[RMDB]
RNA sequence: GGGAACGACUCGAGUAGAGUCGAAAAAUGAUACGGGAAUGUAGGGCUCUGACUGGGUGUUUGCUGUGGUAUACUUCUUCAGCACUGCGCCGCAAACAUCCGCCUCGUGACUCACACAUCAGCAUGAGGAGGGAUGUUACUUCGGUAACAUCCCUCCAAAAGAAACAACAACAACAAC
Reactivity to 2A3 in 0.01 (KOAc 150mM, MgCl2 10mM, bicine 150mM(pH8.5), 24C), signal-to-noise 2, nucleotides 027 to 126: a000u080g060a030u080a060c160g080g000g020a110a110u070g040u170a060g000g070g020c060u070c070u080g090a120c070u080g000g040g000u000g030u090u000u000g000c000u000g010u070g090g100u090a170u010a100c000u070u300c050u110u080c170a000g000c000a010c010u010g000c000g030c030c030g010c000a000a010a000c000a000u000c000c000g000c000c000u010c080g050u050g010a060c050u000c000a060c000a030c000a040u100c010a030g120c000a130u150g030a000
Source information: This 177-nucleotide RNA was probed chemically with 2A3. The data come from the RNA Mapping Database (RMDB), library OK1LIB. For 2A3, 622 sequencing reads were counted.